The record gives the reactivity of an RNA of 177 nucleotides to DMS and 2A3. The data come from the RNA Mapping Database (RMDB), library OK1LIB. The DMS profile rests on 5,431 reads. For 2A3 the reverse transcriptase was SuperScript II with manganese. The reactions ran in a buffer of 150 mM KOAc, 10 mM MgCl2 and 150 mM bicine (pH 8.5), at 24 C.
RNA sequence: GGGAACGACUCGAGUAGAGUCGAAAAUGACUGUUGAACAAAGUGGAAUUGUUCAAGUGCACGUUGGUGGCGUCUUUCUGCUUUUUUUCGACGUUUUGGGCUGGUGCUAAGUCCGAAGUGUGGUCACACUGGGAUACGGAUUCGUCCGUAUCCCAGUAAAAGAAACAACAACAACAAC
Reactivity to DMS in 0.01 (KOAc 150mM, MgCl2 10mM, bicine 150mM(pH8.5), 24C), signal-to-noise 2, nucleotides 027 to 126: u000g000a070c010u010g030u020u010g000a040a020c300a000a030a050g020u020g000g000a020a090u020u010g000u000u000c030a090a070g000u010g000c040a030c070g010u030u030g020g020u000g000g040c010g000u000c000u000u010u000c030u020g000c030u000u000u000u040u000u010u020c100g020a050c020g010u020u010u030u000g000g010g000c030u000g000g020u010g020c080u030a050a040g010u000c020c030g030a040a040g000u020g000u020g000g030u000c030a070c260
Reactivity to 2A3 in 0.01 (KOAc 150mM, MgCl2 10mM, bicine 150mM(pH8.5), 24C), signal-to-noise 5, nucleotides 027 to 126: u110g050a040c030u070g010u020u030g000a040a000c020a050a020a050g050u060g080g010a100a130u070u020g030u100u150c090a130a100g030u100g100c020a000c040g130u150u290g140g030u060g020g000c000g000u000c000u000u080u010c010u020g020c000u050u060u060u010u010u040u090c020g030a030c030g020u000u000u060u080g000g000g000c010u010g000g140u130g060c090u170a110a010g030u010c010c000g000a040a050g020u080g010u070g140g020u060c010a020c000